[RMDB]
RNA sequence: GGGAACGACUCGAGUAGAGUCGAAAAUACCAAUGGUUCGCCAUUGGUACUUGUAUUGUCGAAUACUACCGUAGAAGUAUUCAGGUCUCAUAACUACGGAUAUACACUAGAGUUUCGACUCUAGUAAUGAAAUAGAAAACUUCGGUUUUCUAUUUCAAAAAGAAACAACAACAACAAC
Reactivity to DMS in 0.01 (KOAc 150mM, MgCl2 10mM, bicine 150mM(pH8.5), 24C), signal-to-noise 3, nucleotides 027 to 126: u000a010c000c000a010a000u010g000g000u000u020c240g020c000c000a010u000u000g010g020u000a000c050u000u000g010u000a110u010u000g010u000c160g010a020a010u010a000c000u000a090c010c010g020u000a000g000a190a020g020u000a000u000u000c010a100g000g000u000c000u000c020a080u020a100a160c020u000a010c000g000g000a300u000a090u010a120c190a060c000u000a010g000a020g000u000u000u000c160g000a040c000u000c000u000a010g000u000a050a100
Reactivity to 2A3 in 0.01 (KOAc 150mM, MgCl2 10mM, bicine 150mM(pH8.5), 24C), signal-to-noise 3, nucleotides 027 to 126: u020a000c010c000a020a000u010g000g010u050u040c230g010c060c010a010u000u010g000g000u010a020c010u040u110g120u110a190u120u220g150u140c060g010a000a010u000a020c000u060a250c000c000g000u000a000g010a170a000g010u000a010u040u000c030a040g090g110u010c010u000c030a080u080a190a090c000u000a010c000g000g020a030u080a020u040a140c040a000c010u010a000g000a000g010u030u120u140c200g100a000c010u000c000u010a000g010u010a000a060

The record gives the reactivity of an RNA of 177 nucleotides to DMS and 2A3. Conditions: 150 mM KOAc, 10 mM MgCl2 and 150 mM bicine (pH 8.5), 24 C. For DMS the reverse transcriptase was MarathonRT. The 2A3 profile rests on 3,513 reads.